[RMDB]
Source: RMDB library OK2TST, as collected in RNAgym. The record gives the reactivity of an RNA of 177 nucleotides to DMS and 2A3. DMS adducts were read by reverse transcription with MarathonRT. Reactivities are given for positions 27 through 126. Conditions: 150 mM KOAc, 10 mM MgCl2 and 150 mM bicine (pH 8.5), 24 C.
RNA sequence: GGGAACGACUCGAGUAGAGUCGAAAAGAUGCCGUCUUUCACUUCGGCGGUGUCAUUCUGGAUGUAGGCUUCGCAAACUUCUGCGAAUUCUUCUACCAGCUUGAGAAACUGAUCUUUGGCCGAAGAGGUCCAGAAUGGACUUCGGUCCAUUCUGGACAAAAGAAACAACAACAACAAC
Reactivity to DMS in 0.01 (KOAc 150mM, MgCl2 10mM, bicine 150mM(pH8.5), 24C), signal-to-noise 1, nucleotides 027 to 126: g000a010u000g030c070c030g010u030c010u000u030u000c120a140c020u000u010c060g010g020c000g030g000u000g020u000c000a090u000u010c010u000g000g000a190u000g000u000a000g000g000c200u000u010c010g050c030a010a100a110c260u000u010c150u000g000c000g000a010a030u000u000c010u000u000c030u000a300c020c010a010g000c230u000u030g000a090g010a030a110a110c130u000g000a100u000c050u000u000u030g020g010c010c010g000a070a020g000a130g000
Reactivity to 2A3 in 0.01 (KOAc 150mM, MgCl2 10mM, bicine 150mM(pH8.5), 24C), signal-to-noise 1, nucleotides 027 to 126: g000a050u110g020c000c040g010u030c030u070u300u190c130a180c070u090u130c060g000g000c030g000g000u060g040u040c010a010u040u040c020u030g060g000a060u040g020u080a010g000g000c000u030u000c010g000c000a090a240a300c160u250u250c070u150g010c000g000a000a010u000u020c010u020u000c000u000a140c000c010a010g000c010u120u110g070a030g100a110a110a040c040u060g060a120u080c050u080u070u110g040g010c010c000g020a050a050g010a080g000